[RMDB]
RNA sequence: GGGAACGACUCGAGUAGAGUCGAAAAGGCUAGGUGGUAUUCCGGUGUGGGAUACUUGGUAAUAUGUAACGCUAAUUGCAUAAGAUUGUACGACGGAAUUUACAGUCUUGGUUUUUAUAAACCUGAAAAAAGGAAUUACACUUCGGUGUAAUUCCAACGAACCAUGUGUGUUCGCACACAUGGUUCGAAAAGAAACAACAACAACAAC
Reactivity to 2A3 in 0.01 (KOAc 150mM, MgCl2 10mM, bicine 150mM(pH8.5), 24C), signal-to-noise 1, nucleotides 027 to 156: g050g000c020u010a030g010g020u000g010g080u090a050u030u010c010c010g020g020u070g030u080g050g070g010a050u030a180c000u000u040g030g000u040a060a050u000a050u090g030u060a140a020c030g000c110u040a080a040u070u030g000c010a030u040a160a020g030a110u030u070g090u100a030c050g000a010c060g100g000a010a030u090u070u060a060c050a030g020u030c000u020u030g030g000u020u070u000u050u000a160u100a050a040a010c000c000u020g130a070a010a000a000a010a030g000g020a010a000u000u000a000c000a000c000u020u160c220g030g000u010g000u010a000a000u000u000c000c000a000a000